[RMDB]
RNA sequence: GGGAACGACUCGAGUAGAGUCGAAAAGAUAUGGAGUCAGGCUAGCAACCCUCGGAAACGAGGGAAUUGCUUGGACCCUGCUCCUAAGUCAAACAUCGCUAUCCUCCUUCGGGAGGAUAGCGAUGAACAGGUAUUGGUAGUUCGCUACCAAUACCUGAAAAGAAACAACAACAACAAC
Reactivity to DMS in 0.01 (KOAc 150mM, MgCl2 10mM, bicine 150mM(pH8.5), 24C), signal-to-noise 3, nucleotides 027 to 126: g000a030u000a300u010g000g010a010g000u020c040a000g010g020c070u000a020g050c020a030a040c010c000c000u000c000g000g010a070a080a190c000g010a000g000g000g000a020a000u000u000g020c000u010u000g030g010a160c300c030c010u000g010c000u000c000c020u000a030a100g020u000c030a170a110a270c000a000u010c000g000c000u000a010u000c010c000u000c000c000u000u000c170g010g000g000a020g010g010a000u000a010g000c010g000a000u000g000a040a200
Reactivity to 2A3 in 0.01 (KOAc 150mM, MgCl2 10mM, bicine 150mM(pH8.5), 24C), signal-to-noise 1, nucleotides 027 to 126: g020a020u110a060u190g000g030a020g060u300c050a000g060g020c000u000a010g030c000a000a020c010c030c000u000c010g030g060a100a040a040c020g020a000g010g000g000a000a040u050u010g000c010u030u060g060g040a080c080c010c000u000g010c000u000c000c000u030a120a020g050u030c050a110a130a000c000a000u000c000g000c000u000a000u000c010c000u000c040c000u060u150c250g120g060g020a000g000g000a010u020a000g000c000g010a010u000g000a000a000
An RNA of 177 nucleotides, treated with DMS and 2A3 and read out base by base. Source: RMDB library TTRDEL, as collected in RNAgym. The 2A3 profile rests on 3,140 reads. For DMS, 2,412 sequencing reads were counted.